Conditions: 150 mM KOAc, 10 mM MgCl2 and 150 mM bicine (pH 8.5), 24 C. An RNA of 177 nucleotides, treated with 2A3 and DMS and read out base by base.
[RMDB]
RNA sequence: GGGAACGACUCGAGUAGAGUCGAAAAAGGGGCAUCUAAACUAGGGCUGAUCAUCAAGAAAGAAGAGACCAUGUGUAGUUAUGACUUCCUCAUCUAUGGAAAAACCCCUUUGUUUAGAGGUAACAUACCGAGAAUACAUAUUCGUAUGUAUUCUCGGAAAAGAAACAACAACAACAAC
Reactivity to 2A3 in 0.01 (KOAc 150mM, MgCl2 10mM, bicine 150mM(pH8.5), 24C), signal-to-noise 7, nucleotides 027 to 126: a000g070g000g020g010c020a050u000c010u050a040a020a020c020u050a030g010g050g000c040u040g100a120u050c020a020u020c020a070a070g110a180a120a010g080a050a020g050a010g050a060c060c040a060u070g070u020g050u180a150g080u100u170a070u100g070a090c020u050u040c040c030u060c020a100u040c070u080a100u050g040g010a010a050a040a040a070c020c000c000c000u070u070u010g020u010u020u020a030g010a020g010g070u080a090a040c030a050u070a070
Reactivity to DMS in 0.01 (KOAc 150mM, MgCl2 10mM, bicine 150mM(pH8.5), 24C), signal-to-noise 8, nucleotides 027 to 126: a040g000g010g020g010c090a060u010c010u010a020a040a040c020u010a060g010g010g010c030u000g010a160u010c060a070u010c100a090a090g010a050a100a110g010a040a040g010a110g000a100c050c020a060u000g010u030g020u020a080g020u020u030a050u020g010a100c100u010u010c010c020u000c120a060u030c050u020a060u030g000g010a020a040a050a110a100c110c010c000c020u000u020u020g000u000u000u000a070g010a050g020g020u020a030a070c090a090u020a130
High DMS reactivity at an A or C suggests that its Watson-Crick edge is free.